[RMDB]
RNA sequence: GGGAACGACUCGAGUAGAGUCGAAAACACAAACACACCUUUUUGACACUUUUCUUGUUGCCUGUGGCUAUUUGUUUGACUUAUGCAAACAUAGUCUACGAGCCCACUACUCCCAUUUCGUCAGCGCUGAGAGGACAGUUCGCUGUCCUCAAAAGAAACAACAACAACAAC
Reactivity to DMS in 0.01 (KOAc 150mM, MgCl2 10mM, bicine 150mM(pH8.5), 24C), signal-to-noise 6, nucleotides 027 to 129: c090a080c120a100a060a100c110a040c150a080c110c040u000u000u000u000u000g020a090c190a100c050u000u000u000u000c050u010u040g020u010u000g030c080c030u000g000u040g010g020c010u010a070u000u030u080g040u000u000u000g050a130c080u020u040a030u100g040c040a010a000a000c000a030u030a040g020u030c030u000a030c080g030a080g010c030c020c010a070c080u040a010c100u020c010c000c000a090u020u060u030c070g000u000c090a000g000c110g060c060u000g010a150
Reactivity to 2A3 in 0.01 (KOAc 150mM, MgCl2 10mM, bicine 150mM(pH8.5), 24C), signal-to-noise 9, nucleotides 027 to 129: c070a010c050a040a170a000c120a000c000a050c040c000u060u040u020u060u090g060a030c030a040c040u030u030u050u020c030u040u080g080u040u070g020c000c020u060g000u020g010g000c000u010a050u060u120u110g060u010u010u010g050a100c030u140u210a070u300g070c000a010a000a000c010a020u010a000g010u010c010u020a020c050g030a010g000c000c000c000a060c030u090a040c010u010c000c000c020a030u050u100u070c060g070u090c030a050g050c030g000c080u040g020a010
Chemical mapping of a 170-nucleotide RNA with DMS and 2A3. The DMS profile rests on 20,863 reads. The reactions ran in a buffer of 150 mM KOAc, 10 mM MgCl2 and 150 mM bicine (pH 8.5), at 24 C. For 2A3, 22,005 sequencing reads were counted.